[RMDB]
RNA sequence: GGGAACGACUCGAGUAGAGUCGAAAAUUGGAAUUUUGAGUGGACCUGACUCUAGUACGAGAGGACCGAGUUGGACGUACCUCUAGUGUAUCAGUUGUGCCGCUAGGUGCAUUGCUGAGUAGCUACGCGACCGGUAGAGUUUCGACUCUACCGGUCGAAAAGAAACAACAACAACAAC
Reactivity to DMS in 0.01 (KOAc 150mM, MgCl2 10mM, bicine 150mM(pH8.5), 24C), signal-to-noise 2, nucleotides 027 to 126: u040u000g000g020a150a100u000u000u000u030g000a090g000u000g010g000a160c080c010u000g070a060c020u000c010u000a050g010u020a040c040g000a140g000a160g010g000a170c080c070g000a090g000u000u040g000g000a120c100g000u000a040c030c000u030c090u000a000g000u000g000u010a300u000c010a000g020u000u000g020u000g000c010c000g000c300u080a030g000g060u020g030c040a010u010u010g010c030u000g000a000g000u060a300g000c010u010a000c190g020
Reactivity to 2A3 in 0.01 (KOAc 150mM, MgCl2 10mM, bicine 150mM(pH8.5), 24C), signal-to-noise 3, nucleotides 027 to 126: u110u080g100g050a060a070u070u020u050u180g070a050g010u150g010g120a090c070c040u010g010a030c000u000c010u010a010g060u040a020c000g020a000g040a020g080g020a000c050c010g000a010g020u040u050g050g000a020c090g070u100a090c040c000u000c020u000a020g000u030g100u250a080u010c000a000g070u030u030g000u000g000c010c020g020c180u100a160g000g010u110g030c000a010u040u030g000c010u000g020a010g010u050a000g000c020u010a000c080g010
Annotation
The record gives the reactivity of an RNA of 177 nucleotides to DMS and 2A3. For 2A3 the reverse transcriptase was SuperScript II with manganese. The reactions ran in a buffer of 150 mM KOAc, 10 mM MgCl2 and 150 mM bicine (pH 8.5), at 24 C. Source: RMDB libraries RFM100 and RFMREP, as collected in RNAgym. Values cover nucleotides 27 to 126. DMS adducts were read by reverse transcription with MarathonRT.